[RMDB]
RNA sequence: GGGAACGACUCGAGUAGAGUCGAAAACAAACAACAUUGUACCUUUUGCUCGUAAGCAAGUAGCUGCUCUAGCUUAAUUGCAAAAACACCUCUUAUAGGUUCGAGCGUCUGUGGUUUGACUCCGUUAAUAAUUGCAGACUUAACCCCAACGGAUGCUACACUACUCCAUGUUCGCAUGGAGUAGUGUAAAAGAAACAACAACAACAAC
Reactivity to 2A3 in 0.01 (KOAc 150mM, MgCl2 10mM, bicine 150mM(pH8.5), 24C), signal-to-noise 4, nucleotides 027 to 156: c040a020a070a020c060a070a030c060a150u140u190g050u190a140c050c030u060u190u160u210g000c000u000c010g030u050a030a090g000c010a020a010g050u050a020g060c010u090g070c090u090c120u260a000g020c010u040u110a150a090u160u020g000c010a020a000a000a070a030c050a040c040c040u100c080u190u290a140u220a290g020g000u000u000c010g000a000g000c000g000u000c000u010g000u000g000g000u000u020u010g000a010c010u000c010c000g010u010u000a020a010u010a010a010u040u030g010c000a000g010a030c000u080u120a080a110c020c000c050c030a000a010c000g000g000a000u040g010c010u000